[RMDB]
RNA sequence: GGGAACGACUCGAGUAGAGUCGAAAAUAAAAAAUAAUAAGGAAACAUUGUCCUACCUGAUUCUACCACUGUUCAUCUCACGCAGUGUGCACUCCCUGACUCUGAAUUUUGCAGCUUUGAGACUGAGGUAAUUGAGACUGAUAGGGAUUUAAGGAUAUCGCGUAUAUAAGUUCGCUUAUAUACGCGAAAAAGAAACAACAACAACAAC
Reactivity to DMS in 0.01 (KOAc 150mM, MgCl2 10mM, bicine 150mM(pH8.5), 24C), signal-to-noise 2, nucleotides 027 to 156: u050a040a030a070a070a030a080u000a050a080u000a090a090g020g000a140a130a130c020a070u010u000g010u000c010c000u000a080c050c040u020g000a160u000u010c000u000a050c010c010a020c000u000g020u000u000c060a100u000c090u000c050a080c300g000c040a040g010u000g020u010g000c010a060c120u010c040c020c000u000g000a130c050u020c020u010g010a070a050u000u000u000u010g010c050a080g010c010u010u000u000g010a140g010a080c080u000g020a020g060g010u000a030a130u010u000g000a080g010a050c090u020g020a160u000a060g020g010g030a110u000u000u000a080a140g020g010a050u000a090
Reactivity to 2A3 in 0.01 (KOAc 150mM, MgCl2 10mM, bicine 150mM(pH8.5), 24C), signal-to-noise 3, nucleotides 027 to 156: u080a000a050a020a020a000a040u260a120a040u190a070a090g040g000a130a050a040c060a130u110u140g030u090c010c020u020a070c000c010u090g030a150u040u070c010u100a030c030c020a020c020u000g050u050u030c030a080u020c120u030c030a020c040g010c000a030g010u030g040u100g040c040a030c090u020c000c010c000u020g020a050c000u010c010u040g050a070a110u030u020u070u140g020c020a010g040c030u150u150u230g020a050g020a060c030u030g030a040g000g080u020a020a090u110u060g020a030g030a060c050u060g020a050u120a030g030g000g000a010u080u100u050a080a030g050g040a020u150a020